Chemical mapping of a 177-nucleotide RNA with 2A3.

[RMDB]
RNA sequence: GGGAACGACUCGAGUAGAGUCGAAAAGAUAUGGAGUGAUCUAUGAGCGAUAAGCUACCUUCGGAAACGAAGGAAUAGCUUUUGACGCUCACGAUCACUCCUAAGUCAAAACGCCGCUUCGGCGGCGGCCCCUAUUAUUGUUCGCAAUAAUAGGGGCAAAAGAAACAACAACAACAAC
Reactivity to 2A3 in 0.01 (KOAc 150mM, MgCl2 10mM, bicine 150mM(pH8.5), 24C), signal-to-noise 3, nucleotides 027 to 126: g030a020u050a050u180g000g000a000g010u010g000a000u000c030u120a300u300g000a000g000c040g100a120u010a190a000g000c000u000a030c000c000u000u000c020g050g000a100a080a070c010g010a000a030g030g010a050a150u060a000g000c010u000u060u050u150g160a110c100g010c000u000c000a000c000g010a000u000c000a000c010u000c000c000u010a000a010g010u000c010a000a030a110a150c010g030c000c000g040c080u050u070c280g210g020c000g000g030c000g010
For 2A3, 7,195 sequencing reads were counted.